RNA sequence: GGGAACGACUCGAGUAGAGUCGAAAAAUAAUAGUCAUAUCCUUAAUUGGAUAUGAAGCAAGUAUGAUUAUAGGGUUAAUGAUAGGGCUAAAAGGACAGAACAAGUUUAAGGUGUUCAUGUUUGAGUUAAGAGGGCUUGUUGAUGAUCCUAAAUACAGACGGAUUAAAGAUUCGUCUUUAAUCCGUCAAAAGAAACAACAACAACAAC
Reactivity to DMS in 0.01 (KOAc 150mM, MgCl2 10mM, bicine 150mM(pH8.5), 24C), signal-to-noise 3, nucleotides 027 to 156: a140u010a090a150u010a120g000u010c010a010u000a030u000c010c020u000u010a110a190u010u000g050g030a030u000a020u000g010a040a080g030c070a060a080g020u000a050u010g000a130u020u000a110u000a080g070g000g010u000u000a060a100u000g010a080u020a080g010g020g000c060u000a050a070a080a130g000g010a070c030a060g020a070a030c040a070a120g030u000u000u000a080a120g020g020u000g020u000u000c030a090u000g020u020u000u000g010a110g000u000u010a040a060g010a100g020g020g040c130u000u010g010u000u010g010a120u000g000a070u010c010c000u010a020a060a120u000a090c070a160
Reactivity to 2A3 in 0.01 (KOAc 150mM, MgCl2 10mM, bicine 150mM(pH8.5), 24C), signal-to-noise 4, nucleotides 027 to 156: a000u170a000a090u060a080g040u010c000a000u010a000u020c010c000u060u060a110a040u300u050g000g000a000u010a000u010g000a000a000g030c010a020a010g060u110a050u120g060a070u090u110a020u130a150g060g010g020u040u090a090a010u050g010a060u080a050g030g000g020c010u030a060a000a050a030g010g000a000c020a040g020a040a010c040a060a040g040u060u150u180a100a040g060g000u020g040u030u070c060a040u050g070u070u070u100g040a060g020u030u060a090a010g020a060g050g040g000c020u050u040g030u020u030g040a040u030g010a030u010c000c030u120a080a060a070u190a050c080a060
Chemical mapping of a 207-nucleotide RNA with DMS and 2A3.
In probing experiments dimethyl sulfate is read out at A N1 and C N3, which are open when not base-paired.
Source: RMDB library OK3TST, as collected in RNAgym.
For DMS the reverse transcriptase was MarathonRT.
2A3 adducts were read by reverse transcription with SuperScript II with manganese.
The reactions ran in a buffer of 150 mM KOAc, 10 mM MgCl2 and 150 mM bicine (pH 8.5), at 24 C.